[RMDB]
The record gives the reactivity of an RNA of 177 nucleotides to DMS and 2A3. The data come from the RNA Mapping Database (RMDB), library OK2TST. The reactions ran in a buffer of 150 mM KOAc, 10 mM MgCl2 and 150 mM bicine (pH 8.5), at 24 C. The 2A3 profile rests on 928 reads. DMS adducts were read by reverse transcription with MarathonRT.
RNA sequence: GGGAACGACUCGAGUAGAGUCGAAAAUCGCCAAAAUGUGGUCUUCAUGACUAUGUACACCACCGGCAGAUAAUAGGCCCAUGAUAUGGACAGCUUUGCCUGCUUUAACUGCUUUAUCAACGGCGGCGGGUGUUACCAGAUUCGUCUGGUAACACCCAAAAGAAACAACAACAACAAC
Reactivity to DMS in 0.01 (KOAc 150mM, MgCl2 10mM, bicine 150mM(pH8.5), 24C), signal-to-noise 1, nucleotides 027 to 126: u010c040g010c010c010a130a170a120a110u020g010u020g020g020u010c020u030u010c140a090u010g010a080c100u000a010u000g040u040a170c220a100c000c010a090c010c160g030g000c080a070g000a050u030a060a040u000a050g000g000c050c030c050a060u010g010a110u000a250u000g000g010a100c070a020g000c140u010u000u010g000c070c010u000g050c150u000u000u000a040a050c060u030g000c030u000u000u000a040u000c070a080a110c110g030g010c010g020g040c100
Reactivity to 2A3 in 0.01 (KOAc 150mM, MgCl2 10mM, bicine 150mM(pH8.5), 24C), signal-to-noise 1, nucleotides 027 to 126: u030c000g000c000c000a040a000a000a240u170g010u020g020g010u000c040u040u130c130a130u170g070a100c110u150a020u040g040u020a040c020a050c060c010a040c000c050g020g000c050a030g010a030u060a050a080u100a090g060g030c020c020c000a030u130g040a060u100a060u120g030g000a040c040a010g050c060u130u100u070g000c030c010u060g030c000u050u010u010a010a000c000u040g000c000u060u230u100a150u130c040a000a000c070g030g000c000g030g020c000